[RMDB]
RNA sequence: GGGAACGACUCGAGUAGAGUCGAAAAGCUGGCGAACAGCGUGUCAUAUACGGCCUGCGCCCCCUGGGAUAGCUGAGCAUCCGCAGCCUCAAUGCGCCAGGGCUUAUGUGCUACUCCGCCCAGCGCGUGAGUGAUAAUCAUUCGUGAUUAUCACUCAAAAAGAAACAACAACAACAAC
Reactivity to 2A3 in 0.01 (KOAc 150mM, MgCl2 10mM, bicine 150mM(pH8.5), 24C), signal-to-noise 5, nucleotides 027 to 126: g010c020u020g030g010c050g060a150a070c070a050g030c040g050u020g040u030c050a020u060a010u020a190c040g060g010c010c010u040g030c020g030c010c010c000c000c020u030g020g030g020a090u110a060g020c040u050g010a010g010c030a070u050c030c050g020c050a020g000c020c000u060c030a050a070u110g010c010g010c040c010a050g000g010g000c000u050u050a060u060g050u030g010c010u010a050c020u010c020c000g030c000c030c000a010g020c040g000c020g050
Reactivity to DMS in 0.01 (KOAc 150mM, MgCl2 10mM, bicine 150mM(pH8.5), 24C), signal-to-noise 9, nucleotides 027 to 126: g010c040u000g010g010c050g010a090a160c110a060g010c060g020u000g010u010c080a060u010a080u000a060c130g010g000c030c020u010g010c050g010c020c030c020c040c030u000g010g000g010a110u000a080g020c030u000g010a100g020c080a100u000c070c070g010c060a060g010c030c030u000c070a080a080u010g010c030g010c040c090a100g000g000g010c030u000u000a040u000g020u000g010c030u000a050c040u000c080c090g000c060c010c020a120g000c020g010c130g010